Source: RMDB library TTRINS, as collected in RNAgym. This 177-nucleotide RNA was probed chemically with DMS. The RNA was probed in 150 mM KOAc, 10 mM MgCl2 and 150 mM bicine (pH 8.5) at 24 C. For DMS, 2,948 sequencing reads were counted.
RNA sequence: GGGAACGACUCGAGUAGAGUCGAAAAGAUAUGGACAUGUCGGUGUCAGUUCGUUGAACUACUCCGAGUCAUCGGAAACGAUGACUCUUUGGGAGCAACGAGACUGACACCGACAUGUCCUAAGUCACGAAUCUAUUCUGUUCGCAGAAUAGAUUCGAAAAGAAACAACAACAACAAC
Reactivity to DMS in 0.01 (KOAc 150mM, MgCl2 10mM, bicine 150mM(pH8.5), 24C), signal-to-noise 2, nucleotides 027 to 126: g000a040u000a300u010g020g010a020c000a000u000g030u000c020g000g010u000g010u010c010a000g000u000u000c000g010u010u000g010a100a100c080u020a300c030u000c050c140g000a010g000u000c000a010u000c000g000g000a130a060a210c000g000a020u000g000a020c000u000c000u000u000u010g010g000g000a040g010c010a000a010c000g000a060g010a040c000u010g010a020c000a000c010c000g000a000c020a000u010g000u000c010c000u000a010a090g000u010c070a240